[RMDB]
An RNA of 177 nucleotides, treated with DMS and 2A3 and read out base by base. For 2A3, 6,028 sequencing reads were counted. 2A3 adducts were read by reverse transcription with SuperScript II with manganese. The data come from the RNA Mapping Database (RMDB), library VIROID.

RNA sequence: GGGAACGACUCGAGUAGAGUCGAAAAGACGAAGGCCGGUGAGAAAGGAGCUGUCAGCACUAAGCCGGACGGCGCCCUCGCACCAGUUCCGCUGUGGGUUCACCUACAAGAACGUACGGUGUUGAGGCACCAAACAAUACUUCGGUAUUGUUUGGUGAAAAGAAACAACAACAACAAC
Reactivity to DMS in 0.01 (KOAc 150mM, MgCl2 10mM, bicine 150mM(pH8.5), 24C), signal-to-noise 4, nucleotides 027 to 126: g020a080c040g020a060a070g000g010c020c030g010g020u010g000a100g010a120a140a090g010g010a100g010c010u000g010u020c130a130g010c010a100c070u010a080a290g010c010c030g000g000a030c030g000g010c020g010c050c000c010u000c010g000c010a010c000c010a210g010u000u000c000c020g000c060u000g000u000g010g010g000u000u010c300a110c030c000u000a010c030a030a080g000a040a030c010g010u010a060c290g000g000u000g010u010u010g020a010g020g010
Reactivity to 2A3 in 0.01 (KOAc 150mM, MgCl2 10mM, bicine 150mM(pH8.5), 24C), signal-to-noise 3, nucleotides 027 to 126: g060a010c040g020a050a040g040g000c010c010g000g020u040g010a070g130a040a090a020g050g040a120g010c010u110g190u300c110a010g000c000a020c060u080a090a020g010c010c000g030g000a000c000g030g040c000g020c010c010c010u000c010g000c000a000c010c010a010g010u010u000c000c000g010c020u010g000u020g000g020g000u140u210c170a280c150c000u000a010c010a020a090g010a000a000c010g020u120a020c060g020g000u010g020u070u300g010a000g000g000
For DMS the reverse transcriptase was MarathonRT.